[RMDB]
About this RNA
This 207-nucleotide RNA was probed chemically with 2A3. It was measured as part of the RMDB library OK3TST. 2A3 is a SHAPE reagent: it acylates the 2'-hydroxyl of flexible nucleotides of all four kinds. Reactivities are given for positions 27 through 156. Conditions: 150 mM KOAc, 10 mM MgCl2 and 150 mM bicine (pH 8.5), 24 C.

RNA sequence: GGGAACGACUCGAGUAGAGUCGAAAAAGAUCCUGAUCAACGGGGUCAGGUGGCAGUACAGGCUCGGCGCCAACAACGUCCCCGAAUGGUGGGCCGGCGAUGUCGUCUACUACAACCCUCUUACCGUGAACGGGUACAGCACCUACGGAGACAUCACAACGAUCUACAUGUUCGCAUGUAGAUCGUUAAAAGAAACAACAACAACAAC
Reactivity to 2A3 in 0.01 (KOAc 150mM, MgCl2 10mM, bicine 150mM(pH8.5), 24C), signal-to-noise 2, nucleotides 027 to 156: a000g050a010u050c000c000u050g030a100u090c020a040a160c020g010g000g010g070u010c040a010g000g050u040g030g010c010a040g080u140a060c040a080g100g040c050u040c060g040g000c080g020c010c000a020a090c030a040a010c120g110u150c000c000c000c040g120a050a170u080g010g000u060g030g010g020c000c000g010g010c040g050a000u030g040u040c020g010u070c070u040a040c060u080a030c020a030a120c000c030c000u040c040u120u110a100c070c020g060u040g070a030a030c040g000g000g000u040a030c000a020g030c030a050c040c000u010a010c040g060g000a030g020a030c010a030u100c010a020c010